RNA sequence: GGGAACGACUCGAGUAGAGUCGAAAAAUAUCCGGUCAGACUUACUUCCUUAAUAACUUACUGAUCGGCAUCAUAAUAAUGGCAUCCUCAAGUUUGGUUCAGACAUGAGGAUCACGUAAGUGUCUGUCUGAGAAUCCCAUGUGGAGCUGACAAAGGACCGACGUAUUUACUUCGGUAAAUACGUCGGAAAAGAAACAACAACAACAAC
Reactivity to 2A3 in 0.01 (KOAc 150mM, MgCl2 10mM, bicine 150mM(pH8.5), 24C), signal-to-noise 1, nucleotides 027 to 156: a000u180a050u040c000c000g000g020u000c010a000g010a100c010u010u110a060c020u130u110c070c030u120u050a110a060u190a160a040c040u080u110a090c040u010g130a070u000c000g000g030c030a060u060c020a000u030a290a060u180a110a040u130g050g000c000a130u000c000c020u000c050a040a000g020u050u200u210g160g000u120u130c000a020g040a050c000a000u010g020a030g080g010a010u010c080a000c000g050u000a030a100g000u000g000u040c050u050g040u000c020u000g020a020g050a100a050u030c010c000c000a030u150g030u110g050g000a000g050c030u000g100a030c040a130a130a070g240g000a000